[RMDB]
RNA sequence: GGGAACGACUCGAGUAGAGUCGAAAAGCCAUGAGUUUCGACUCAUGGCAAAAGCGCGUCAGCGCUACGAUGCAAGCGCAAGCGCGUCCAUGGUAAAUGACAAAAUUCUCGGGUUCGCCCGAGAAAAUCUUGCUCUUAUGUUCGCAUAAGAGCAAGAAAAAGAAACAACAACAACAAC
Reactivity to DMS in 0.01 (KOAc 150mM, MgCl2 10mM, bicine 150mM(pH8.5), 24C), signal-to-noise 2, nucleotides 027 to 126: g000c020c000a030u000g000a040g020u000u000u020c140g000a010c000u000c000a010u000g000g010c020a000a000a000a140g000c000g030c000g010u000c160a300g030c000g020c010u010a010c140g020a110u000g040c210a120a060g010c010g010c010a100a190g000c000g000c010g000u010c060c050a080u010g000g010u020a050a120a080u010g010a090c180a050a100a130a120u000u000c000u000c000g020g000g010u010u000c200g010c000c010c000g000a040g000a000a000a000a060
Reactivity to 2A3 in 0.01 (KOAc 150mM, MgCl2 10mM, bicine 150mM(pH8.5), 24C), signal-to-noise 2, nucleotides 027 to 126: g000c000c010a010u000g010a010g010u090u060u200c150g040a030c000u000c010a000u000g010g000c000a000a000a080a000g020c010g020c030g040u060c090a030g010c010g030c000u010a040c030g170a110u230g060c130a130a000g000c020g030c010a050a000g020c000g000c000g000u040c030c030a040u080g070g070u190a140a130a100u170g040a080c090a030a060a080a200u040u000c010u000c000g010g030g040u040u050c200g070c020c040c040g000a000g010a000a000a000a000